[RMDB]
This 177-nucleotide RNA was probed chemically with 2A3 and DMS. For DMS, 1,210 sequencing reads were counted. The data come from the RNA Mapping Database (RMDB), library OK2TRN.

RNA sequence: GGGAACGACUCGAGUAGAGUCGAAAAGACGGCAAUCCGAUCGGCGGCUUCCAGUCGGUCGCGACGUUCAUCGACCGCUCGGUGCCGAAGGACGAGAAGGAGAAGGCCGCCGCCUUGCUGCUGCGGACGAUGCCUGGCUAUUCGUAGCCAGGCAUCGAAAAGAAACAACAACAACAAC
Reactivity to 2A3 in 0.01 (KOAc 150mM, MgCl2 10mM, bicine 150mM(pH8.5), 24C), signal-to-noise 2, nucleotides 027 to 126: g060a000c000g020g050c050a070a060u070c030c010g020a130u010c010g040g050c040g000g000c020u150u040c000c020a100g100u100c010g000g000u000c000g010c090g130a060c060g130u100u220c050a090u070c010g020a040c000c020g000c010u020c050g050g010u070g000c020c010g100a050a060g100g020a050c030g000a000g070a140a020g080g080a150g030a060a090g110g000c020c040g010c020c040g040c020c020u100u120g010c080u060g000c000u060g050c020g040g020a010
Reactivity to DMS in 0.01 (KOAc 150mM, MgCl2 10mM, bicine 150mM(pH8.5), 24C), signal-to-noise 2, nucleotides 027 to 126: g000a100c010g000g040c030a100a180u000c070c020g000a130u010c010g020g000c010g010g000c020u000u020c020c040a120g010u000c020g020g000u000c010g000c090g020a100c170g040u010u000c090a140u010c000g030a030c000c040g000c050u000c090g010g010u010g040c110c050g000a100a050g010g010a070c060g020a190g000a150a070g040g000a100g020a120a110g000g000c020c040g060c040c030g030c080c050u000u000g020c060u000g020c040u010g000c000g000g020a110